Chemical mapping of a 177-nucleotide RNA with 2A3 and DMS. For 2A3 the reverse transcriptase was SuperScript II with manganese. The reactions ran in a buffer of 150 mM KOAc, 10 mM MgCl2 and 150 mM bicine (pH 8.5), at 24 C.

[RMDB]
RNA sequence: GGGAACGACUCGAGUAGAGUCGAAAAAUACCGGUACGGCUCACGGUGCGGCAGUGUGGAGACCUGUUGUAAAGCGCGGCGCCCAUCGCGGUACCGCGUGAGAACGCAUCCGCGGAGGCGGAGCGGUCGACUCAAUAAAGUUCGCUUUAUUGAGUCGAAAAGAAACAACAACAACAAC
Reactivity to 2A3 in 0.01 (KOAc 150mM, MgCl2 10mM, bicine 150mM(pH8.5), 24C), signal-to-noise 9, nucleotides 027 to 126: a000u170a040c020c000g010g010u070a030c040g030g030c020u020c020a030c030g030g000u030g010c010g020g000c020a020g020u050g010u060g170g040a040g040a080c000c010u020g020u050u040g090u110a080a070a030g020c000g000c000g020g000c010g000c010c000c010a220u210c130g020c160g010g000u020a040c000c000g000c000g000u020g010a040g040a040a010c000g000c010a170u050c010c010g010c060g050g030a050g080g070c010g010g000a020g020c010g010g000u010
Reactivity to DMS in 0.01 (KOAc 150mM, MgCl2 10mM, bicine 150mM(pH8.5), 24C), signal-to-noise 5, nucleotides 027 to 126: a090u020a100c020c000g000g010u020a040c040g020g000c020u000c050a100c080g000g010u010g010c020g010g000c010a020g010u020g020u030g010g020a160g000a080c080c020u010g000u000u010g000u010a070a100a290g020c020g030c000g000g000c030g010c000c000c010a160u040c280g000c120g010g010u000a070c020c010g000c000g000u000g000a090g000a080a120c020g010c010a060u010c000c020g010c040g030g020a080g020g010c000g000g000a030g000c000g000g000u010